This 177-nucleotide RNA was probed chemically with DMS and 2A3.

[RMDB]
RNA sequence: GGGAACGACUCGAGUAGAGUCGAAAAAUCUUCAGGAGCACAUGCUAGUGAUGGAAUCCAAACUCUUCACAUAAAAGGAAGAAGAAAACCUCGUCUCAUCGUAAAAGACUUGGUGAAGCAGUCAACAAUUUUACACCGAAUUCGUUCGGUGUAAAAUAAAAGAAACAACAACAACAAC
Reactivity to DMS in 0.01 (KOAc 150mM, MgCl2 10mM, bicine 150mM(pH8.5), 24C), signal-to-noise 4, nucleotides 027 to 126: a040u000c010u000u000c050a090g000g000a060g020c070a120c170a080u010g010c030u000a040g010u000g010a060u000g000g000a060a090u000c050c040a060a070a170c110u000c000u000u000c040a040c080a100u010a060a070a140a140g000g000a040a010g000a080a100g020a120a050a150a060c020c000u000c060g000u000c010u000c050a170u000c210g010u000a060a140a110a020g020a010c020u000u010g010g010u000g000a070a100g000c090a050g000u010c060a030a070c160a050
Reactivity to 2A3 in 0.01 (KOAc 150mM, MgCl2 10mM, bicine 150mM(pH8.5), 24C), signal-to-noise 2, nucleotides 027 to 126: a000u040c030u090u010c070a080g100g070a040g000c040a040c040a140u230g020c020u050a030g080u020g020a040u040g010g060a020a040u000c030c000a010a030a090c040u000c010u040u030c010a030c010a170u280a060a170a000a010g130g010a020a100g040a000a070g070a010a100a010a000c030c010u020c030g050u000c010u000c030a180u100c060g110u110a050a120a030a010g020a010c010u030u000g020g030u000g000a030a030g020c060a010g030u050c000a000a080c030a120
Overview: The RNA was probed in 150 mM KOAc, 10 mM MgCl2 and 150 mM bicine (pH 8.5) at 24 C. The data come from the RNA Mapping Database (RMDB), library OK2TRN. For 2A3 the reverse transcriptase was SuperScript II with manganese.